[RMDB]
RNA sequence: GGGAACGACUCGAGUAGAGUCGAAAAAGCUUUGGCCGCGGUGGGGAAGCUUGUUUUUAGAUUUUUCUUCGAAGACACUCUUUUGGAGCCAUAGCAACAGAGGAGCGUGAGUUUGGCCUCGGCUCAGAUACACCCCUAUAUUCGUAUAGGGGUGUAUAAAAGAAACAACAACAACAAC
Reactivity to DMS in 0.01 (KOAc 150mM, MgCl2 10mM, bicine 150mM(pH8.5), 24C), signal-to-noise 7, nucleotides 027 to 126: a050g000c020u000u010u000g010g030c040c030g020c120g030g020u000g020g010g010g000a040a040g000c050u000u000g010u000u000u000u010u010a090g010a060u000u000u010u010u010c050u010u000c050g010a080a110g000a070c040a050c030u000c010u000u000u000u000g020g000a300g010c020c270a080u010a090g010c030a050a180c060a060g000a040g000g010a030g020c050g010u010g000a060g010u000u000u010g020g000c030c010u000c090g010g000c010u000c070a080g010
Reactivity to 2A3 in 0.01 (KOAc 150mM, MgCl2 10mM, bicine 150mM(pH8.5), 24C), signal-to-noise 2, nucleotides 027 to 126: a000g030c040u090u020u030g050g010c010c000g020c060g060g020u110g020g040g000g010a030a000g010c010u010u050g020u020u170u040u010u090a070g010a070u060u100u060u080u040c030u040u010c050g040a030a020g060a020c010a010c030u010c010u020u050u040u100g040g010a020g000c020c030a170u140a100g020c010a000a030c000a020g070a020g080g030a020g020c040g040u090g060a070g020u040u170u140g060g000c000c020u010c010g010g000c010u000c050a010g010